This 177-nucleotide RNA was probed chemically with DMS and 2A3. Reactivities are given for positions 27 through 126. For DMS, 3,832 sequencing reads were counted. The reactions ran in a buffer of 150 mM KOAc, 10 mM MgCl2 and 150 mM bicine (pH 8.5), at 24 C. The data come from the RNA Mapping Database (RMDB), library OK2TST. 2A3 adducts were read by reverse transcription with SuperScript II with manganese.

RNA sequence: GGGAACGACUCGAGUAGAGUCGAAAAGGCGAGGAUCUCCAUCGCCGAAGGAAAGGAACUCAAGGAGCGUCUCCCCCACAUCUGGACCGUGGCGCAGCAGGUGAAAUACGUGAGGACUUUCCAGAUGUACAAGGCAGAUAUUCGUAUCUGCCUUGUAAAAAGAAACAACAACAACAAC
Reactivity to DMS in 0.01 (KOAc 150mM, MgCl2 10mM, bicine 150mM(pH8.5), 24C), signal-to-noise 5, nucleotides 027 to 126: g010g000c000g000a060g010g000a200u010c180u020c020c020a230u000c010g010c020c010g010a150a110g020g010a040a070a030g030g010a100a140c030u000c030a100a110g000g000a060g000c030g000u010c080u000c020c000c010c040c070a170c050a060u000c060u010g010g000a080c180c050g000u000g010g020c030g010c060a120g010c080a090g000g010u000g010a050a070a110u000a070c090g020u000g000a090g000g020a210c070u000u000u000c000c000a130g010a110u010g000
Reactivity to 2A3 in 0.01 (KOAc 150mM, MgCl2 10mM, bicine 150mM(pH8.5), 24C), signal-to-noise 2, nucleotides 027 to 126: g020g010c010g010a020g040g050a220u120c100u080c180c020a190u000c000g010c000c020g010a030a030g070g050a090a060a010g070g030a130a030c000u010c060a000a120g120g010a050g020c020g040u000c130u030c100c000c000c000c000a040c000a090u040c030u010g000g010a020c000c070g060u030g010g000c040g000c040a050g060c020a030g080g000u050g040a040a070a020u180a030c070g040u000g030a040g010g020a000c020u010u000u030c010c000a010g000a020u060g000